[RMDB]
RNA sequence: GGGAACGACUCGAGUAGAGUCGAAAAGAUAUGGAAUGGCUAGGGAGCUGCGUCGGAAACGAUCAGCGAAGAACUAGCAUUCCUAAGUCAAAACUGUCGGGUUAAUGUUCGCAUUAACCCGACAGAAUCAUUGUCCGAGGUUCGCCUCGGACAAUGAAAAAGAAACAACAACAACAAC
Reactivity to DMS in 0.01 (KOAc 150mM, MgCl2 10mM, bicine 150mM(pH8.5), 24C), signal-to-noise 1, nucleotides 027 to 126: g020a020u000a300u010g030g000a000a020u000g020g000c000u000a000g000g010g000a070g050c010u000g000c300g040u000c020g020g020a120a190a130c010g000a000u020c010a000g020c000g000a100a100g000a120a120c000u000a020g000c010a010u000u000c000c000u000a010a080g020u020c030a040a070a090a260c000u020g010u000c000g000g000g000u000u000a000a000u000g020u000u020c200g000c000a010u000u000a020a040c000c010c010g000a000c000a000g000a060a010
The record gives the reactivity of an RNA of 177 nucleotides to DMS. For DMS the reverse transcriptase was MarathonRT. Source: RMDB library TTRDEL, as collected in RNAgym. In probing experiments dimethyl sulfate is read out at A N1 and C N3, which are open when not base-paired.